Chemical mapping of a 177-nucleotide RNA with DMS and 2A3. Conditions: 150 mM KOAc, 10 mM MgCl2 and 150 mM bicine (pH 8.5), 24 C. For 2A3 the reverse transcriptase was SuperScript II with manganese. DMS adducts were read by reverse transcription with MarathonRT.
RNA sequence: GGGAACGACUCGAGUAGAGUCGAAAACGUCAGAGGACGAAGUCGGUCCAUCUGCGGUAAGAGACCGACAUAGAGUUCGAAGCAGAACGAACAACCGCAGACACACGAUUGGAGUGUGAAUGAGAGACGAUGCUGCUCCUUUCGAGGAGCAGCAUCGAAAAGAAACAACAACAACAAC
Reactivity to DMS in 0.01 (KOAc 150mM, MgCl2 10mM, bicine 150mM(pH8.5), 24C), signal-to-noise 1, nucleotides 027 to 126: c000g010u000c000a280g000a300g000g070a010c190g000a150a170g040u000c020g000g070u000c000c160a300u000c000u000g000c000g000g000u030a210a100g000a250g000a000c030c000g000a000c000a100u000a230g000a180g000u000u000c000g000a080a150g130c100a080g000a070a040c000g080a020a260c180a210a070c010c000g000c000a000g000a200c170a060c000a030c120g000a240u000u000g010g070a080g040u000g000u010g000a040a070u000g000a160g070a080g000a100
Reactivity to 2A3 in 0.01 (KOAc 150mM, MgCl2 10mM, bicine 150mM(pH8.5), 24C), signal-to-noise 1, nucleotides 027 to 126: c000g000u000c000a050g000a130g090g110a070c050g040a080a000g000u000c000g000g000u020c000c000a000u000c000u030g000c030g000g070u070a100a030g080a000g020a000c000c000g000a040c000a080u070a000g180a000g000u000u050c000g030a000a000g000c000a000g100a030a050c050g040a060a050c000a000a000c010c000g030c000a000g000a000c000a000c000a010c000g040a030u000u120g300g000a170g050u000g000u000g000a060a030u150g000a030g040a000g000a000